[RMDB]
Chemical mapping of a 177-nucleotide RNA with DMS and 2A3. It was measured as part of the RMDB library OK1LIB.
RNA sequence: GGGAACGACUCGAGUAGAGUCGAAAAAAGACCACCCUCAAGGAUUAUACCGCGGGUAUCAAAACUUGCAUCUGGUAUCAAAGAAAGAGCGGGGACGUCACGACGUUCAUUGGAAACACUGUGAUCACAUCGAAGGAUACUUCGGUAUCCUUCGAUGAAAAGAAACAACAACAACAAC
Reactivity to DMS in 0.01 (KOAc 150mM, MgCl2 10mM, bicine 150mM(pH8.5), 24C), signal-to-noise 3, nucleotides 027 to 126: a040a020g000a090c050c000a120c030c010c020u020c040a060a130g010g030a130u040u010a080u010a040c000c000g020c110g090g000g000u000a000u030c210a040a060a110a080c050u010u000g020c110a160u030c140u010g030g000u030a060u010c060a090a050a090g010a070a060a080g010a080g000c030g020g000g000g000a070c040g000u020c020a060c100g000a100c130g010u010u000c020a210u020u000g010g000a060a030a050c120a100c030u030g020u000g000a060u010c090a080
Reactivity to 2A3 in 0.01 (KOAc 150mM, MgCl2 10mM, bicine 150mM(pH8.5), 24C), signal-to-noise 5, nucleotides 027 to 126: a000a000g140a040c020c010a050c010c030c000u040c010a050a060g050g010a050u100u060a040u110a080c020c020g050c040g080g020g040u020a040u140c050a000a040a020a050c030u040u060g030c010a070u050c080u070g030g010u130a060u130c120a060a100a070g080a050a110a000g040a050g020c050g020g020g010g000a020c030g010u030c030a010c090g080a000c010g040u020u020c020a070u040u160g120g030a060a100a010c060a010c080u040g080u100g060a030u060c010a040